[RMDB]
RNA sequence: GGGAACGACUCGAGUAGAGUCGAAAAGAAGAGAAGCGCGCGAAUUGGAAACCAGCGAACCCUAUUACGCGCGCAAGGAACCGGGCCUUGGUUCCUUGGAAAGACUAGAUAAUUUCGCUGGUAAAGACACUGCUAUCACUUUCGAGUGAUAGCAGUGAAAAGAAACAACAACAACAAC
Reactivity to 2A3 in 0.01 (KOAc 150mM, MgCl2 10mM, bicine 150mM(pH8.5), 24C), signal-to-noise 3, nucleotides 027 to 126: g060a050a000g120a000g030a140a000g040c000g000c000g000c000g000a020a020u030u030g030g020a030a070a140c000c000a000g000c000g000a020a030c030c000c000u010a020u050u060a030c000g000c000g000c000g010c020a010a000g000g000a000a000c010c020g080g180g060c020c090u070u090g030g000u000u000c000c000u000u000g000g040a090a030a010g040a010c100u150a040g090a190u250a180a100u080u070u080c010g000c010u000g010g000u020a000a050a000g040a000
Reactivity to DMS in 0.01 (KOAc 150mM, MgCl2 10mM, bicine 150mM(pH8.5), 24C), signal-to-noise 1, nucleotides 027 to 126: g040a070a140g000a090g020a150a170g020c000g020c020g000c000g000a160a030u010u010g000g000a180a090a060c000c000a010g010c000g050a040a040c130c000c000u000a070u010u010a040c040g040c030g000c000g000c000a020a020g000g020a020a000c000c000g010g000g000c130c050u000u010g020g020u000u000c010c030u000u010g010g010a150a090a110g000a190c140u010a070g000a050u050a030a060u040u000u000c000g000c000u000g010g000u040a080a050a080g020a300

Background:
This 177-nucleotide RNA was probed chemically with 2A3 and DMS. The 2A3 profile rests on 2,766 reads. Reactivities are given for positions 27 through 126. For DMS the reverse transcriptase was MarathonRT.